[RMDB]
RNA sequence: GGGAACGACUCGAGUAGAGUCGAAAAGCAGUCGGGGAAAAUUCGCGGUCUGGUGGUUAUUCCCGUGGAUUUCGCCGAACAGAUGGAGCGCGCCAACGCCACCGCACCGAUUCAGGUGAUCACCGACCUCAUCCAAACGAUUCGUCGUUUGGAUGAGAAAAGAAACAACAACAACAAC
Reactivity to 2A3 in 0.01 (KOAc 150mM, MgCl2 10mM, bicine 150mM(pH8.5), 24C), signal-to-noise 2, nucleotides 027 to 126: g090c060a030g010u000c000g040g030g010g000a010a000a020a170u070u080c080g000c000g030g020u040c060u120g070g030u040g040g060u070u140a120u120u090c050c000c000g030u020g000g000a080u000u110u090c040g010c050c010g030a080a040c030a060g130a070u130g060g000a120g050c050g000c010g000c030c010a040a010c050g000c000c010a040c030c030g000c020a010c030c000g050a060u100u160c040a090g080g030u040g020a050u060c000a000c000c000g020a040c050
Reactivity to DMS in 0.01 (KOAc 150mM, MgCl2 10mM, bicine 150mM(pH8.5), 24C), signal-to-noise 2, nucleotides 027 to 126: g000c120a120g000u000c000g000g000g020g000a030a050a110a080u010u000c080g030c030g010g000u000c080u000g030g020u000g000g000u010u000a160u010u010c080c020c010g020u010g010g000a050u000u000u000c050g010c010c010g000a110a110c120a120g020a100u010g000g020a180g010c030g010c150g000c040c030a040a100c160g000c010c000a030c000c010g000c140a000c020c010g000a110u000u000c220a080g010g010u000g000a140u000c050a050c040c000g020a040c160